Structure probing data (DMS and 2A3) for a 177-nucleotide construct.
[RMDB]
RNA sequence: GGGAACGACUCGAGUAGAGUCGAAAAGAUAUGGAGCGAGUCUCGCCGACGAAGGAAGUCGGAAACGACUUCCAGAGGAACUACGAGGUCUCGCUCCUAAGUCAAAACGUGUAGUUCGCUACACGAACGAUUAACUAGACUUCGGUCUAGUUAAUCGAAAAGAAACAACAACAACAAC
Reactivity to DMS in 0.01 (KOAc 150mM, MgCl2 10mM, bicine 150mM(pH8.5), 24C), signal-to-noise 6, nucleotides 027 to 126: g010a030u010a300u000g000g000a010g020c010g020a020g020u000c000u000c010g020c090c080g000a170c040g000a300a220g010g000a010a000g020u000c000g000g000a040a070a110c010g010a010c000u010u010c000c000a020g010a300g000g000a140a090c110u010a110c010g010a020g010g000u020c020u000c010g010c000u000c000c000u000a010a050g000u000c050a050a040a090a090c020g010u000g010u000a010g000u000u020c180g000c000u000a010c000a000c000g000a070a100
Reactivity to 2A3 in 0.01 (KOAc 150mM, MgCl2 10mM, bicine 150mM(pH8.5), 24C), signal-to-noise 6, nucleotides 027 to 126: g010a010u040a020u120g000g000a000g000c010g000a000g010u000c010u020c030g120c080c060g140a300c030g010a040a010g000g000a000a000g010u010c010g010g000a020a010a010c010g000a000c000u000u010c000c000a000g010a000g010g030a170a110c160u240a080c280g010a000g000g040u110c000u000c010g000c000u000c000c000u000a000a000g000u000c000a000a000a050a100c030g000u000g000u010a020g020u050u080c300g000c130u010a000c010a000c010g010a070a020

Conditions: 150 mM KOAc, 10 mM MgCl2 and 150 mM bicine (pH 8.5), 24 C.